[RMDB]
Chemical mapping of a 207-nucleotide RNA with 2A3. Values cover nucleotides 27 to 156. For 2A3, 496 sequencing reads were counted. Source: RMDB library OK3TST, as collected in RNAgym. Conditions: 150 mM KOAc, 10 mM MgCl2 and 150 mM bicine (pH 8.5), 24 C.
RNA sequence: GGGAACGACUCGAGUAGAGUCGAAAAGCAAUAUGUCACAAAACGAAAUUACAUCCGACAAUGUCCAAUAAUUUACCUGUUUUUUAUCCAAUCUUUUUAAUCUACUUACUAAUCUUUUUAGGUCGUUACGGUCCUCAGGUGAUAGUGCCAUACUGCCCUCCCAAUUCAUCUUCGGAUGAAUUGGGAGAAAAGAAACAACAACAACAAC
Reactivity to 2A3 in 0.01 (KOAc 150mM, MgCl2 10mM, bicine 150mM(pH8.5), 24C), signal-to-noise 2, nucleotides 027 to 156: g000c000a000a010u040a060u130g010u040c010a000c050a010a040a090a070c120g120a100a000a050u170u130a110c060a070u030c050c020g040a040c110a100a100u090g070u000c020c010a020a010u150a130a020u000u150u080a130c030c010u010g110u060u000u000u050u240u160a060u050c020c000a020a150u000c080u010u090u040u060u160a050a100u160c050u070a120c040u090u050a060c060u130a120a200u260c100u110u230u050u050u150a070g000g000u000c010g020u040u060a020c020g000g080u030c040c000u040c050a030g080g000u000g000a000u080a100g050u030g000c000c000a010u050a050c050u040g040c040c060